This 207-nucleotide RNA was probed chemically with 2A3. For 2A3, 489 sequencing reads were counted. It was measured as part of the RMDB library OK3TST. Values cover nucleotides 27 to 156. The RNA was probed in 150 mM KOAc, 10 mM MgCl2 and 150 mM bicine (pH 8.5) at 24 C.
RNA sequence: GGGAACGACUCGAGUAGAGUCGAAAAGGGGGCUAUGUGCAGAUGAUAAUCUAUCACGCCCAGCCGCGGAAGGAUGCUACUACGGUUGGCGGGGUUAGAACGUACUAUACAUGGCGAGGGUGCUUCUAACUGCAGGUCGUCUCGCCCGAAGCCCCCAGACCUAUGGUGGUUUCGACCACCAUAGGUCAAAAGAAACAACAACAACAAC
Reactivity to 2A3 in 0.01 (KOAc 150mM, MgCl2 10mM, bicine 150mM(pH8.5), 24C), signal-to-noise 1, nucleotides 027 to 156: g010g000g000g010g000c030u050a060u080g080u080g040c080a010g030a120u010g000a010u060a240a010u110c040u060a090u170c090a050c080g020c020c010c000a000g020c010c030g010c020g010g060a040a060g100g010a060u170g040c010u110a120c010u010a000c070g000g020u010u010g010g030c010g000g080g000g000u000u010a000g000a030a010c060g050u030a000c000u020a000u030a190c120a300u170g170g000c080g000a040g010g000g070u010g030c000u030u020c020u030a010a140c000u000g020c040a030g020g000u010c010g010u010c000u010c020g000c010c000c010g030a000a020g000c000c000c000c000c000a000